[RMDB]
RNA sequence: GGGAACGACUCGAGUAGAGUCGAAAAAACGUUGCAUGAUCGUAAAACAUGCCCGGCUUACCGUGAGCCGCCUUUGAAAGAAAGGUUUACACGGACUCUGUAGCGUUACGCACGUACCUAACUUGUGAAAACGGCAUCUUGUUCGCAAGAUGCCGAAGCUGAAUAAGUGCUUCGGCACUUAUUCAGCAAAAGAAACAACAACAACAAC
Reactivity to 2A3 in 0.01 (KOAc 150mM, MgCl2 10mM, bicine 150mM(pH8.5), 24C), signal-to-noise 3, nucleotides 027 to 156: a000a000c000g000u000u010g000c010a000u000g010a060u170c030g070u190a020a030a030a030c000a000u010g000c020c000c000g000g000c030u050u090a160c010c000g000u000g000a000g000c000c000g010c000c000u020u000u000g060a100a040a000g010a000a000a000g010g030u000u040u050a020c000a000c000g010g030a060c060u080c080u170g100u120a020g010c040g050u050u110a050c180g000c030a030c040g040u080a070c030c020u050a080a210c020u080u060g040u050g150a050a030a080a020c010g000g000c000a000u000c020u000u000g000u070u050c110g000c100a010a000g000a010u000g000c000c000g000a000a000